Chemical mapping of a 207-nucleotide RNA with 2A3. For 2A3, 472 sequencing reads were counted. The RNA was probed in 150 mM KOAc, 10 mM MgCl2 and 150 mM bicine (pH 8.5) at 24 C.
RNA sequence: GGGAACGACUCGAGUAGAGUCGAAAAUUGCUCGGCAGUUAUUUCCAUUGGAACAACGUCAUCGAGGUGACUGGAUCCAUUGCUGGCGCCGCAGUAUUCCUCGGCGUUGUACUGUCCUUGGCGCGUCGGGGAUAUUCUCCCGAGAGCGGUACGGACAGGUGUAAAAACCGUUCGCGGUUUUUACACCAAAAGAAACAACAACAACAAC
Reactivity to 2A3 in 0.01 (KOAc 150mM, MgCl2 10mM, bicine 150mM(pH8.5), 24C), signal-to-noise 1, nucleotides 027 to 156: u090u030g010c020u050c060g110g000c030a110g000u090u050a070u070u090u030c050c050a070u080u100g020g110a040a010c010a010a010c170g040u000c040a120u040c040g030a050g110g000u020g010a050c070u070g000g100a130u010c000c030a040u030u180g160c170u030g090g000c060g000c010c020g090c050a000g010u040a110u050u140c000c000u040c040g020g000c020g000u000u030g010u040a050c020u010g000u010c000c000u030u080g140g000c000g000c030g080u020c030g000g000g040g010a050u110a140u290u050c030u040c000c000c010g010a000g000a000g000c070g110g300u050a010c000g020g000a040c030a070